[RMDB]
RNA sequence: GGGAACGACUCGAGUAGAGUCGAAAAGGGGUUCUUGAUAAAAAUGCAUAUUUUUGGCCCUAUAGUCCAGAUGUACUGAAUGAAUCUCUCUGGGAGAACCCCCGCAAAGUCUCACUCAAGCAGGUGCUUGAGAAGCACUGCUUUAUAUCAUCAGUCAUAGUCCUUUUACGUUCGCGUAAAAGGACUAAAAAGAAACAACAACAACAAC
Reactivity to 2A3 in 0.01 (KOAc 150mM, MgCl2 10mM, bicine 150mM(pH8.5), 24C), signal-to-noise 2, nucleotides 027 to 156: g000g030g060g000u020u040c030u050u040g060a080u170a080a090a080a070a050u130g040c030a060u130a300u180u140u120u080u130g150g000c040c000c060u140a120u080a030g030u030c040c000a020g030a060u130g050u120a100c090u100g060a070a090u110g050a040a130u050c020u040c020u000c000u100g010g010g010a020g000a040a000c000c000c070c000c000g040c010a130a150a000g060u000c050u040c070a050c000u060c030a030a020g020c000a010g000g290u080g030c020u020u060g070a070g020a130a000g010c010a010c000u030g020c000u060u170u060a170u040a030u130c160a030u090c010a000g290u130c030a010